Source information:
Chemical mapping of a 207-nucleotide RNA with 2A3. The 2A3 profile rests on 614 reads. The RNA was probed in 150 mM KOAc, 10 mM MgCl2 and 150 mM bicine (pH 8.5) at 24 C. For 2A3 the reverse transcriptase was SuperScript II with manganese.

[RMDB]
RNA sequence: GGGAACGACUCGAGUAGAGUCGAAAAAUACAUACCACAAAUAUCAUAAACAUAAAUUGGUUCUUCUAAAAUACCAAUAUACGUGGGAUAACAUCUACCGCCACGAAUACUUUGUCUUACAUAAUCAUACAUUUCAUUUGAUGGAGCCAGUAAAACACAUGAUACGCGUGUUCGCACGCGUAUCAUGAAAAGAAACAACAACAACAAC
Reactivity to 2A3 in 0.01 (KOAc 150mM, MgCl2 10mM, bicine 150mM(pH8.5), 24C), signal-to-noise 1, nucleotides 027 to 156: a000u110a000c020a020u100a040c030c000a020c100a030a160a040u300a070u150c130a100u190a240a110a010c030a030u220a150a180a100u040u020g030g000u070u000c030u100u020c040u120a040a030a030a030u070a020c010c000a020a000u060a000u010a090c000g000u020g050g000g030a050u100a150a000c000a050u020c100u130a110c000c160g130c070c000a010c010g040a090a030u040a070c040u130u070u040g040u020c030u000u120a080c080a080u190a150a040u060c040a010u050a220c020a050u240u190u150c030a080u080u000u090g110a100u020g000g050a000g050c020c040a020g110u140a000a140a050a010c080a030